Source: RMDB library RNAMAK, as collected in RNAgym.
Structure probing data (DMS and 2A3) for a 207-nucleotide construct.
DMS (dimethyl sulfate) methylates the pairing face of unpaired adenines and cytosines.
For 2A3, 2,778 sequencing reads were counted.
For 2A3 the reverse transcriptase was SuperScript II with manganese.
For DMS the reverse transcriptase was MarathonRT.
[RMDB]
RNA sequence: GGGAACGACUCGAGUAGAGUCGAAAACAGGAUAUUCGUAUCCUGAAAAAAACCUUUGUGUAGGCGUAUAUGGAGCGAAACAGACCCAUUGGGUCUGCACUCGCUAUGAAGUAUACCGUGCCUACACUCUGGUAAAAAACGUCGAUUCGUCGACGAAAGAGGCUUAUGAAUUCGUUCAUAAGCCUCUAAAAGAAACAACAACAACAAC
Reactivity to DMS in 0.01 (KOAc 150mM, MgCl2 10mM, bicine 150mM(pH8.5), 24C), signal-to-noise 1, nucleotides 027 to 156: c010a040g000g020a030u000a030u000u010c190g010u000a010u010c010c000u000g020a000a020a030a080a050a050a050c030c000u000u020u010g010u000g040u000a030g020g050c040g000u000a020u000a040u010g020g000a030g040c000g020a060a140a090c010a000g020a020c000c000c000a200u000u000g050g090g030u000c000u010g000c010a040c120u010c000g020c000u010a070u020g010a160a300g000u000a030u000a010c080c200g020u000g020c010c000u000a000c000a010c000u000c030u010g000g010u000a010a110a120a020a020a110c000g030u000c000g000a050u010u020c290g030u000c000g000a060c020g000a020a060
Reactivity to 2A3 in 0.01 (KOAc 150mM, MgCl2 10mM, bicine 150mM(pH8.5), 24C), signal-to-noise 3, nucleotides 027 to 156: c000a010g010g000a000u020a040u080u180c150g020u040a020u010c010c000u020g140a210a000a000a000a000a000a000c020c000u010u000u000g000u010g000u000a000g000g010c020g020u000a010u000a000u050g050g030a000g000c000g000a070a010a050c010a000g000a010c000c020c040a180u200u300g020g000g000u000c010u000g000c010a040c040u000c000g000c010u020a300u140g030a030a000g010u010a000u000a030c070c130g090u110g000c000c000u000a000c000a000c000u000c000u000g020g010u060a160a040a000a040a000a060c020g010u010c000g000a010u060u020c160g040u020c000g150a010c010g020a030a040